[RMDB]
RNA sequence: GGGAACGACUCGAGUAGAGUCGAAAAGCCGUUAAGGCCGCCCCAGGCAUUGAACUGCCAGUCAACCGCGCGGCGUUCGCCAGCACCAUUGAUGACCAUAGUCGGGCCAGUAUCACGCAUCCAGGCAAGUGUUCUAUAUGUUCGCAUAUAGAACACUAAAAGAAACAACAACAACAAC
Reactivity to DMS in 0.01 (KOAc 150mM, MgCl2 10mM, bicine 150mM(pH8.5), 24C), signal-to-noise 7, nucleotides 027 to 126: g010c010c010g000u010u030a130a190g000g020c020c040g000c140c020c020c080a140g010g010c020a060u000u000g020a100a130c140u010g010c010c010a150g010u000c070a070a100c080c130g020c090g010c060g000g010c030g010u000u010c070g010c040c030a100g020c050a060c030c050a060u000u000g010a070u000g000a080c060c070a060u010a090g010u000c040g010g010g020c030c040a060g010u010a060u000c060a080c090g000c050a060u000c030c040a070g010g010c130a100
Reactivity to 2A3 in 0.01 (KOAc 150mM, MgCl2 10mM, bicine 150mM(pH8.5), 24C), signal-to-noise 2, nucleotides 027 to 126: g000c000c010g050u100u230a160a100g010g020c000c010g040c000c000c000c030a060g020g000c010a030u030u160g030a080a050c050u070g000c010c010a010g100u100c030a040a070c050c040g030c010g000c050g070g000c020g040u090u100c040g000c010c010a020g000c020a020c030c020a040u040u160g040a070u080g030a080c000c040a070u060a070g050u060c030g020g000g000c000c020a020g020u040a040u140c030a020c080g030c010a020u040c020c000a010g020g040c050a070